[RMDB]
RNA sequence: GGGAACGACUCGAGUAGAGUCGAAAACACAUGCCAUCAUAUCGGUUAAGAACUCUUAACUCUGAUGGCUUUCGAGUUAUGUGGUGCAUUGAAGCUCUCCCUUCAAUUCAAGGUACCGUUCCGUCAAGAGAACGCUUCUGUUCGCAGAAGCGUUCUCAAAAGAAACAACAACAACAAC
Reactivity to DMS in 0.01 (KOAc 150mM, MgCl2 10mM, bicine 150mM(pH8.5), 24C), signal-to-noise 1, nucleotides 027 to 126: c180a150c150a120u020g000c000c010a040u000c000a080u000a150u010c240g020g000u000u000a010a030g000a300a110c300u010c000u000u000a000a000c000u020c090u000g000a000u000g000g000c020u010u000u000c020g010a000g000u000u000a070u000g000u000g020g010u000g020c020a030u000u000g000a060a020g010c040u000c060u000c010c030c020u000u000c130a020a030u000u000c060a010a030g010g000u000a000c050c000g000u000u000c000c020g020u010c160a090a120

Annotation
An RNA of 177 nucleotides, treated with DMS and read out base by base. The data come from the RNA Mapping Database (RMDB), library M2PK90. The DMS profile rests on 756 reads. The reactions ran in a buffer of 150 mM KOAc, 10 mM MgCl2 and 150 mM bicine (pH 8.5), at 24 C. Values cover nucleotides 27 to 126.